About this RNA: This 177-nucleotide RNA was probed chemically with DMS and 2A3.

RNA sequence: GGGAACGACUCGAGUAGAGUCGAAAAGAUAUGGAUGUCAGGAGGGAGCGUAUCGGAAACGAUACAGCGAGGAUCUCCGACAUCCUAAGUCAAAAGGUGAAAUUUACGUUCGCGUAAAUUUCACCAACUCAUAUCCCACGUUCGCGUGGGAUAUGAGAAAAGAAACAACAACAACAAC
Reactivity to DMS in 0.01 (KOAc 150mM, MgCl2 10mM, bicine 150mM(pH8.5), 24C), signal-to-noise 2, nucleotides 027 to 126: g010a050u010a300u010g000g010a010u000g000u010c000a130g050g000a000g000g000g000a030g010c000g000u000a010u000c000g000g010a100a080a150c010g000a010u000a000c000a090g050c010g010a040g010g010a010u000c000u000c000c010g000a000c000a000u000c000c000u000a000a040g010u000c060a080a120a090a080g000g000u000g000a010a000a020u000u000u000a010c000g030u000u030c300g000c010g020u000a000a000a010u000u000u000c000a000c010c000a010a010
Reactivity to 2A3 in 0.01 (KOAc 150mM, MgCl2 10mM, bicine 150mM(pH8.5), 24C), signal-to-noise 2, nucleotides 027 to 126: g050a030u100a030u150g020g000a000u010g060u130c220a280g050g030a010g000g010g010a030g030c000g010u000a000u000c010g000g060a070a050a040c010g000a000u000a010c070a030g000c000g100a200g040g010a010u000c000u020c000c000g000a000c000a010u000c000c000u020a030a000g040u010c030a030a000a050a150g010g000u000g000a010a000a000u000u000u010a020c010g040u050u090c300g000c000g150u010a000a000a020u000u000u000c000a000c000c000a000a000
For 2A3, 5,653 sequencing reads were counted. For DMS the reverse transcriptase was MarathonRT. Values cover nucleotides 27 to 126. Conditions: 150 mM KOAc, 10 mM MgCl2 and 150 mM bicine (pH 8.5), 24 C.